[RMDB]
Chemical mapping of a 177-nucleotide RNA with 2A3 and DMS. For 2A3, 772 sequencing reads were counted. The RNA was probed in 150 mM KOAc, 10 mM MgCl2 and 150 mM bicine (pH 8.5) at 24 C. Reactivities are given for positions 27 through 126. For DMS, 2,769 sequencing reads were counted.
RNA sequence: GGGAACGACUCGAGUAGAGUCGAAAAACAGCACUUACGAGUGCUGAAGCGCCCAGGGAUAUAAUAGCGGUAAACUUCAAAGACCACUUUUCUAUCCCUGGUACUGGAGCCACCUUACGAGGUGGCAUAAGAGGGGGUGAUUCGUCACCCCCUCUUAAAAAGAAACAACAACAACAAC
Reactivity to 2A3 in 0.01 (KOAc 150mM, MgCl2 10mM, bicine 150mM(pH8.5), 24C), signal-to-noise 2, nucleotides 027 to 126: a000c000a000g020c000a010c000u070u020a060c300g190a060g000u000g000c000u000g030a100a040g140c050g110c100c000c010a040g030g000g030a000u000a000u000a000a000u000a000g000c040g010g020u110a140a100a150c100u120u070c300a180a170a020g080a050c000c000a000c020u030u000u000u000c020u020a030u000c010c000c000u020g020g000u010a070c060u120g060g080a040g000c000c000a000c000c000u020u020a020c300g030a000g000g000u010g000g000c000a000
Reactivity to DMS in 0.01 (KOAc 150mM, MgCl2 10mM, bicine 150mM(pH8.5), 24C), signal-to-noise 2, nucleotides 027 to 126: a130c010a000g030c000a000c000u000u010a080c230g000a020g030u000g000c000u000g000a020a060g000c200g020c160c000c000a000g000g000g010a010u000a010u000a000a000u020a020g010c120g010g010u040a050a080a210c210u020u080c300a110a160a060g000a030c000c010a050c020u000u010u020u000c090u000a000u000c000c000c000u010g010g000u010a010c030u070g000g010a200g000c010c000a010c000c000u000u000a100c140g050a040g000g020u000g040g000c000a000